Structure probing data (2A3 and DMS) for a 177-nucleotide construct. For 2A3, 614 sequencing reads were counted. The RNA was probed in 150 mM KOAc, 10 mM MgCl2 and 150 mM bicine (pH 8.5) at 24 C.
RNA sequence: GGGAACGACUCGAGUAGAGUCGAAAACAAAAUUUCAAAGCUUGUCUCUGAUCUCUUUGGAGAUACAGUAGCAGUGCAGAGUAGAAAGGAGAGAUGGGUUCUGGACGCCAUGGAAGGAAACUUAGUGCAUUACUGCCCGGUUCGCCGGGCAGUAAUGAAAAGAAACAACAACAACAAC
Reactivity to 2A3 in 0.01 (KOAc 150mM, MgCl2 10mM, bicine 150mM(pH8.5), 24C), signal-to-noise 2, nucleotides 027 to 126: c040a000a050a010a080u140u210u100c050a060a090a020g000c000u090u030g080u080c000u000c010u030g050a030u000c030u010c000u160u110u300g140g000a010g000a010u100a090c010a000g170u170a000g000c010a030g030u030g140c050a030g070a000g110u230a030g080a070a120a060g000g000a010g000a030g040a080u050g020g020g000u050u020c040u040g020g020a050c010g010c000c010a000u080g020g020a040a000g010g000a160a000a000c000u020u000a090g060u060g140
Reactivity to DMS in 0.01 (KOAc 150mM, MgCl2 10mM, bicine 150mM(pH8.5), 24C), signal-to-noise 2, nucleotides 027 to 126: c080a000a080a160a140u040u000u000c020a040a190a290g000c040u020u010g000u010c040u050c000u000g000a020u000c010u000c020u000u040u040g030g010a010g000a000u000a030c040a030g000u000a080g000c000a040g010u040g000c030a040g010a290g000u030a120g050a080a040a170g000g000a100g020a030g040a050u010g010g000g070u000u000c150u000g030g010a140c070g020c010c060a000u040g000g000a090a040g020g010a020a050a020c010u000u000a130g000u070g000